[RMDB]
RNA sequence: GGGAACGACUCGAGUAGAGUCGAAAAGGUGUUAUCAUUGCUACUCCUGAGCAUAACCACACUAUCUCAGCUUCACUCAAAUCUGUACUUGAAUGGCUUUCAUACGAAGUUCAUCCAUUUGAAAACAUGAUUCGUAAAACUUCGGUUUUACGAAUCAAAAAGAAACAACAACAACAAC
Reactivity to DMS in 0.01 (KOAc 150mM, MgCl2 10mM, bicine 150mM(pH8.5), 24C), signal-to-noise 2, nucleotides 027 to 126: g010g020u010g000u010u000a070u010c110a060u020u010g030c040u000a080c090u000c040c060u000g010a100g000c050a070u000a070a030c160c040a050c060a060c030u000a040u010c030u000c040a080g010c080u000u000c040a010c080u030c030a040a050a060u000c040u000g000u010a050c050u000u000g030a060a040u010g010g000c050u010u010u000c080a080u000a140c220g000a010a080g000u000u000c050a060u010c000c010a090u010u000u010g000a070a040a060a080c260a080
Reactivity to 2A3 in 0.01 (KOAc 150mM, MgCl2 10mM, bicine 150mM(pH8.5), 24C), signal-to-noise 2, nucleotides 027 to 126: g090g000u050g020u080u090a150u070c080a070u020u170g010c010u030a070c040u070c040c040u060g010a030g020c020a050u030a080a010c040c000a040c020a030c070u040a030u050c030u000c020a000g000c030u050u000c040a020c010u000c000a070a080a120u030c030u080g030u060a090c010u010u050g030a060a000u040g050g000c000u040u010u030c050a090u070a180c110g050a030a000g030u070u130c000a050u040c030c000a100u060u080u230g140a070a040a000a000c030a060